[RMDB]
RNA sequence: GGGAACGACUCGAGUAGAGUCGAAAAGGCGGCCCUGAAAAGAUUGUGGGUUACACAAAGGAUGAUGAAGGAAUUGCAAUUGUUGAUUGUCUUGCAGAGUGGGACAAGAUCAAAGACCAGAAGAAGAAUUACCAUACAAAUUCGUUUGUAUGGUAAUAAAAGAAACAACAACAACAAC
Reactivity to DMS in 0.01 (KOAc 150mM, MgCl2 10mM, bicine 150mM(pH8.5), 24C), signal-to-noise 7, nucleotides 027 to 126: g010g020c050g020g010c050c000c010u000g000a080a100a110a140g000a090u010u010g020u000g000g010g010u010u010a070c060a050c060a050a070a090g000g000a080u000g010a090u000g010a110a070g000g000a080a080u000u010g000c080a080a110u010u010g010u010u000g000a150u000u010g010u000c040u000u010g020c050a090g000a110g020u010g010g010g010a060c040a030a030g000a110u000c050a030a050a090g000a120c070c060a060g010a080a090g010a070a080g000a150
Reactivity to 2A3 in 0.01 (KOAc 150mM, MgCl2 10mM, bicine 150mM(pH8.5), 24C), signal-to-noise 4, nucleotides 027 to 126: g090g000c030g020g030c030c000c000u030g070a120a080a020a010g070a050u090u080g030u080g030g060g040u110u130a050c050a000c000a020a070a000g090g010a040u100g010a030u040g030a030a020g050g040a050a070u100u080g010c020a030a070u040u050g060u050u040g040a100u030u040g020u030c010u050u040g050c050a040g040a030g150u070g000g010g000a010c020a020a020g010a040u050c020a020a050a020g040a050c020c010a020g040a120a000g030a040a000g010a100

Chemical mapping of a 177-nucleotide RNA with DMS and 2A3.
Reactivities are given for positions 27 through 126.
The RNA was probed in 150 mM KOAc, 10 mM MgCl2 and 150 mM bicine (pH 8.5) at 24 C.
2A3 adducts were read by reverse transcription with SuperScript II with manganese.
For DMS, 9,849 sequencing reads were counted.